[RMDB]
RNA sequence: GGGAACGACUCGAGUAGAGUCGAAAAUACACGGUUUUUGCACUCACUUUUUUUUUCCUGAGAUGCCAAAUAUUACAGUCUACAUUAAAAUGCAUUGCCACUACGUUUGGCAACGUAUUCAGGCGAAGUGUUUUUCCUACCCCACAUGGAAUGGAAACAUUACCAGUAUGUUCGCAUACUGGUAAUGAAAAGAAACAACAACAACAAC
Reactivity to DMS in 0.01 (KOAc 150mM, MgCl2 10mM, bicine 150mM(pH8.5), 24C), signal-to-noise 3, nucleotides 027 to 156: u010a050c030a070c050g030g010u000u000u000u000u000g000c030a150c040u010c020a060c020u000u000u000u000u000u010u000u000u000c030c010u000g010a080g010a060u000g010c020c150a060a090a070u000a080u010u010a110c090a140g010u000c010u000a050c030a060u000u000a040a070a050a060u000g010c010a020u000u000g010c030c010a080c140u000a090c130g010u000u000u010g010g010c010a020a010c010g020u000a060u000u000c040a060g020g030c090g010a060a090g010u000g010u000u000u000u000u000c010c030u000a140c050c020c020c020a060c060a080u020g020g010a070a090u000g010g010a130a060a150
Reactivity to 2A3 in 0.01 (KOAc 150mM, MgCl2 10mM, bicine 150mM(pH8.5), 24C), signal-to-noise 7, nucleotides 027 to 156: u170a000c020a000c010g060g020u020u020u020u050u040g020c000a010c010u020c010a060c090u070u080u030u030u020u020u040u140u160c040c040u050g020a060g030a120u020g020c040c020a020a020a040u170a070u180u170a090c060a040g000u000c020u060a070c060a180u170u200a140a110a050a020u040g000c010a020u010u030g010c000c010a020c050u280a130c140g110u130u090u040g000g000c000a000a000c010g010u010a030u030u080c090a010g010g000c020g020a080a050g010u010g010u010u020u000u040u020c000c000u030a100c020c010c020c010a080c040a110u190g030g110a070a050u130g020g010a020a010a070
An RNA of 207 nucleotides, treated with DMS and 2A3 and read out base by base. Values are in units of 0.01, from 0 to 300, in steps of 10. The reactions ran in a buffer of 150 mM KOAc, 10 mM MgCl2 and 150 mM bicine (pH 8.5), at 24 C.